[RMDB]
RNA sequence: GGGAACGACUCGAGUAGAGUCGAAAACGCGGAAACUUAACACCCACACCCAACCCACUGUGGUUCUGGCUCCAUGCCAGUGGCAGGAUGCUUUCGGGGAUCGGUGGUCAGGCAGCCCGGGCCGCGAGGCCAAGAUACUAUUCGUAGUAUCUUGGCCAAAAGAAACAACAACAACAAC
Reactivity to 2A3 in 0.01 (KOAc 150mM, MgCl2 10mM, bicine 150mM(pH8.5), 24C), signal-to-noise 9, nucleotides 027 to 126: c030g020c020g020g050a080a080a070c060u120u070a100a020c070a060c030c010c000a030c010a020c020c010c010a040a050c020c010c010a120c100u090g060u160g080g080u090u040c020u020g020g000c010u080c120c050a130u220g030c000c010a060g010u090g050g000c010a020g040g070a060u160g040c020u080u130u150c090g010g000g010g030a030u070c030g010g030u040g020g040u070c040a040g020g040c020a010g030c000c020c010g000g030g010c000c000g020c020g020a060
Reactivity to DMS in 0.01 (KOAc 150mM, MgCl2 10mM, bicine 150mM(pH8.5), 24C), signal-to-noise 9, nucleotides 027 to 126: c050g010c030g000g000a140a090a070c090u010u020a080a100c110a100c040c010c050a130c160a090c030c020c040a070a110c080c010c020a100c090u000g010u010g000g010u030u020c060u000g000g000c000u000c100c130a090u020g010c020c010a060g010u020g010g010c010a030g010g010a060u020g000c030u000u020u010c070g010g000g000g010a060u010c220g000g020u010g000g010u010c090a060g010g000c060a090g000c030c020c020g000g010g010c000c010g000c040g000a150
Record summary:
This 177-nucleotide RNA was probed chemically with 2A3 and DMS. For DMS the reverse transcriptase was MarathonRT. Conditions: 150 mM KOAc, 10 mM MgCl2 and 150 mM bicine (pH 8.5), 24 C. 2A3 is a SHAPE reagent: it acylates the 2'-hydroxyl of flexible nucleotides of all four kinds. The DMS profile rests on 34,307 reads.